[RMDB]
RNA sequence: GGGAACGACUCGAGUAGAGUCGAAAAACGUGUAGAAUAUCUACCAAAUUAUCAUGCUAUUAUGAUAAGUACCCUUAUAUCCACAAAUAUGAGGGUGAUGAACGACAAUAUUCUAUUACUGCAGAGGGAAAAUGCUAUAAAGGAAUAAAAUAUGAAACUACGAGUGGCUAUUCGUAGCCACUCGUAGAAAAGAAACAACAACAACAAC
Reactivity to 2A3 in 0.01 (KOAc 150mM, MgCl2 10mM, bicine 150mM(pH8.5), 24C), signal-to-noise 1, nucleotides 027 to 156: a000c040g000u050g000u040a000g000a020a090u020a000u080c040u010a010c050c040a010a000a220u070u040a000u000c000a010u000g100c010u200a090u300u110a000u130g030a000u000a000a000g050u030a030c000c010c000u010u000a000u000a000u000c120c070a010c070a170a000a140u000a000u000g000a000g040g000g010u010g020a010u030g010a040a030c090g040a020c030a120a000u010a030u050u040c000u000a040u020u090a010c010u080g000c000a000g000a040g130g000g000a030a030a030a000u030g000c010u040a030u110a130a100a080g000g070a000a110u130a140a120a030a000u290a140u220g050a090a030a000